RNA sequence: GGGAACGACUCGAGUAGAGUCGAAAAGCACGAUCGCCAUCCGGUCGGUCUCGGCGAGUGUCUUAGCCAGCAGCACAUACGAUUUCGACGACUUCGAAUCAGGCUCCAAAAAGUAGCUGCGGUCGAAACGGAGCAAUUUUUUCGAAAAUUGCUCCGUAAAAGAAACAACAACAACAAC
Reactivity to 2A3 in 0.01 (KOAc 150mM, MgCl2 10mM, bicine 150mM(pH8.5), 24C), signal-to-noise 1, nucleotides 027 to 126: g000c020a000c080g110a190u020c000g030c030c000a030u000c050c000g130g190u270c160g000g100u060c160u020c100g050g040c010g000a000g010u030g030u070c040u050u030a020g000c060c020a020g050c020a000g060c010a000c000a070u150a100c200g070a030u040u080u140c020g000a010c030g080a100c070u100u090c100g030a040a040u000c020a050g020g020c000u020c010c000a020a060a000a100a150g010u030a010g000c010u020g020c000g060g020u120c030g000a060a120
Reactivity to DMS in 0.01 (KOAc 150mM, MgCl2 10mM, bicine 150mM(pH8.5), 24C), signal-to-noise 2, nucleotides 027 to 126: g000c030a050c010g000a160u000c000g030c000c020a140u000c170c060g040g000u000c080g000g000u000c080u000c130g000g010c000g000a060g010u000g020u000c040u000u000a150g010c030c000a100g030c010a030g010c000a080c080a130u030a090c100g000a080u030u020u010c010g030a050c300g000a130c150u000u000c000g010a020a030u000c050a200g000g000c020u000c030c050a030a100a060a070a130g010u010a100g030c020u000g010c020g030g010u000c080g000a040a120
Structure probing data (2A3 and DMS) for a 177-nucleotide construct.
The 2A3 profile rests on 714 reads.
For 2A3 the reverse transcriptase was SuperScript II with manganese.
The RNA was probed in 150 mM KOAc, 10 mM MgCl2 and 150 mM bicine (pH 8.5) at 24 C.